[RMDB]
The record gives the reactivity of an RNA of 207 nucleotides to 2A3.

RNA sequence: GGGAACGACUCGAGUAGAGUCGAAAACGUACGUGGAGACACGUACGACGAGACUUCGGUCUCGAAUCGCGCGAACUGCUGCCGCGCGCGCGCGAGGCGUCGGUGGUCGGCGAGCCCACGGACGCAAAAACUCGCGCGUAAAUAAAUAGCAUUAGGAGGUAAUCCUAGUAUUCGUACUAGGAUUACCAAAAGAAACAACAACAACAAC
Reactivity to 2A3 in 0.01 (KOAc 150mM, MgCl2 10mM, bicine 150mM(pH8.5), 24C), signal-to-noise 1, nucleotides 027 to 156: c030g000u000a000c000g010u010g000g080a080g000a050c020a000c040g020u000a000c030g000a020c000g000a000g000a000c010u110u210c300g120g000u010c000u000c000g010a020a050u070c000g000c000g030c000g030a180a170c020u030g010c010u030g010c020c000g020c000g000c000g000c010g030c000g000c000g010a000g020g000c020g000u030c080g150g000u000g010g000u010c060g040g070c170g060a040g000c000c000c000a000c040g070g030a000c010g000c030a000a000a000a000a300c000u000c000g000c000g000c000g000u000a000a000a000u150a020a010a010u030a000g020c000a000u040u040a020g040g030a040
The RNA was probed in 150 mM KOAc, 10 mM MgCl2 and 150 mM bicine (pH 8.5) at 24 C.